[RMDB]
RNA sequence: GGGAACGACUCGAGUAGAGUCGAAAACGAUCUUGUCGGCCAUGGUCAUCGCCUCGACCUGGUCAUGCGUCACAUAGACCAUCGUCGUCUUCAGCUGAUGGUGCAGAUCGCUGAUCUCGAGACGCAACCUCCCUAGGGUCUUCGGACCCUAGGGAGGAAAAGAAACAACAACAACAAC
Reactivity to 2A3 in 0.01 (KOAc 150mM, MgCl2 10mM, bicine 150mM(pH8.5), 24C), signal-to-noise 4, nucleotides 027 to 126: c000g000a010u050c090u080u160g090u140c100g000g000c000c000a220u300g040g000u060c050a070u180c120g130c130c040u080c070g010a030c030c010u000g000g040u010c000a010u060g000c030g060u040c010a050c020a160u160a040g070a040c020c020a100u020c010g060u010c040g040u040c050u140u100c080a050g020c070u140g010a030u040g000g070u060g030c030a020g000a010u000c010g000c180u060g000a050u020c010u000c030g070a050g000a010c010g000c030a020a140